[RMDB]
RNA sequence: GGGAACGACUCGAGUAGAGUCGAAAAGCCAGUCAGAGGGCGCUACCAUGCAAACUAGAGCUGGCUACUCUUGCACAGAAUCACCUUUCUAUAAUAACCAGUGCAAGAAGGGUUAUUAUACCAUUUAAAAAUCGUGAAUGCUUCGGCAUUCACGAAAGGAAGAUAAUCACUUCGGUGAUUAUCUUCCAAAAGAAACAACAACAACAAC
Reactivity to 2A3 in 0.01 (KOAc 150mM, MgCl2 10mM, bicine 150mM(pH8.5), 24C), signal-to-noise 4, nucleotides 027 to 156: g010c010c000a000g050u070c030a060g020a060g300g050g010c010g000c020u150a300c100c130a120u260g000c000a030a060a040c000u010a030g000a010g090c000u010g000g000c000u000a010c000u000c000u000u000g000c010a010c000a030g090a090a110u130c040a260c060c010u130u300u130c070u080a000u010a000a000u000a000a000c000c000a000g000u010g000c000a000a000g000a000a010g000g010g000u000u000a000u000u010a000u010a010c020c020a100u130u220u300a070a180a040a010a040u030c000g000u000g010a000a000u000g010c010u030u040c110g060g000c010a000u000u000c000a000c000g000a000a000a000
Reactivity to DMS in 0.01 (KOAc 150mM, MgCl2 10mM, bicine 150mM(pH8.5), 24C), signal-to-noise 1, nucleotides 027 to 156: g070c000c050a080g020u000c070a140g000a070g050g020g040c300g090c050u000a090c080c080a090u000g030c060a090a230a250c080u000a090g000a100g080c000u010g050g040c030u000a180c010u000c000u000u000g000c010a050c010a050g000a100a090u020c030a000c020c000u000u000u000c090u000a070u000a000a030u000a050a030c020c000a300g000u010g000c080a020a010g000a080a120g010g000g000u000u000a050u000u000a030u020a060c110c040a190u000u000u000a030a090a120a100a110u000c010g040u000g020a000a020u010g010c000u000u000c300g050g000c020a010u000u010c000a000c010g000a000a000a050